Structure probing data (2A3 and DMS) for a 177-nucleotide construct. 2A3 adducts were read by reverse transcription with SuperScript II with manganese. Reactivities are given for positions 27 through 126. The RNA was probed in 150 mM KOAc, 10 mM MgCl2 and 150 mM bicine (pH 8.5) at 24 C. The DMS profile rests on 2,055 reads. Reactivities are rounded to 0.1 and cut off at 0 and 3. The 2A3 profile rests on 5,396 reads.

RNA sequence: GGGAACGACUCGAGUAGAGUCGAAAAGAUAUGGAUAUCGAGUUGGGAGUUGCGGAUCGGAAACGAUCCGACCAACGACGAUCAACCGAUAUCCUAAGUCAAAGCACCCUAGUUCGCUAGGGUGCAACAGUAGGAUGACGUUCGCGUCAUCCUACUGAAAAGAAACAACAACAACAAC
Reactivity to 2A3 in 0.01 (KOAc 150mM, MgCl2 10mM, bicine 150mM(pH8.5), 24C), signal-to-noise 2, nucleotides 027 to 126: g010a000u060a010u090g000g030a020u010a010u020c060g030a140g300u000u020g080g060g100a250g020u000u000g030c000g000g000a020u000c010g000g040a010a020a030c010g000a010u000c010c000g010a010c000c010a030a010c020g090a070c110g090a190u100c000a000a000c000c010g000a000u010a010u020c010c000u020a040a000g010u000c040a190a040a070g030c030a010c000c010c000u010a000g010u090u110c300g030c220u020a000g000g000g000u000g000c000a000a010
Reactivity to DMS in 0.01 (KOAc 150mM, MgCl2 10mM, bicine 150mM(pH8.5), 24C), signal-to-noise 2, nucleotides 027 to 126: g000a030u000a210u010g000g000a010u010a010u000c000g010a210g010u000u000g000g010g020a300g010u000u000g000c110g010g010a010u000c000g000g000a030a080a140c030g000a000u000c000c030g000a030c290c080a030a130c050g030a080c160g000a300u000c000a000a020c010c000g000a010u010a010u000c000c010u010a020a100g000u000c020a070a080a100g020c020a000c010c000c000u010a000g010u000u020c210g030c000u000a010g000g000g030u000g000c000a000a020